Structure probing data (DMS and 2A3) for a 177-nucleotide construct. Reactivities are given for positions 27 through 126. For 2A3, 1,504 sequencing reads were counted. Conditions: 150 mM KOAc, 10 mM MgCl2 and 150 mM bicine (pH 8.5), 24 C.

[RMDB]
RNA sequence: GGGAACGACUCGAGUAGAGUCGAAAAACCAUGAGGUCCGACCAGGCGCAUUAACUUGUCCUCGUAGGCGUCCGUCCUACGUCCGACAAGACGACCAAAACACCCCGUGUCUCGCUGUGCCUUCGGGUAGGGUGAGAUUCUUCGGAAUCUCACCCUAAAAAGAAACAACAACAACAAC
Reactivity to DMS in 0.01 (KOAc 150mM, MgCl2 10mM, bicine 150mM(pH8.5), 24C), signal-to-noise 2, nucleotides 027 to 126: a080c000c010a130u000g040a030g000g060u010c000c010g010a110c230c110a080g000g050c100g010c030a060u070u020a130a070c010u020u000g000u000c030c150u070c040g000u000a000g000g000c010g020u000c300c100g000u070c000c000u000a020c020g020u000c200c210g040a020c000a070a000g000a160c070g050a110c020c230a060a120a020a040c060a190c040c040c000c020g040u000g000u000c000u000c070g070c070u010g000u010g000c020c020u000u020c040g030g030g050
Reactivity to 2A3 in 0.01 (KOAc 150mM, MgCl2 10mM, bicine 150mM(pH8.5), 24C), signal-to-noise 2, nucleotides 027 to 126: a000c060c000a070u120g070a040g000g050u050c020c000g000a000c010c090a000g040g000c000g000c040a000u130u060a060a030c010u010u000g000u010c000c000u000c010g000u000a000g010g010c000g090u090c110c080g030u130c020c020u030a010c000g030u020c000c010g010a000c000a000a000g020a050c050g060a070c010c000a000a010a100a000c100a100c010c070c010c000g030u040g030u030c000u000c050g070c040u020g040u070g060c000c000u020u050c010g000g000g060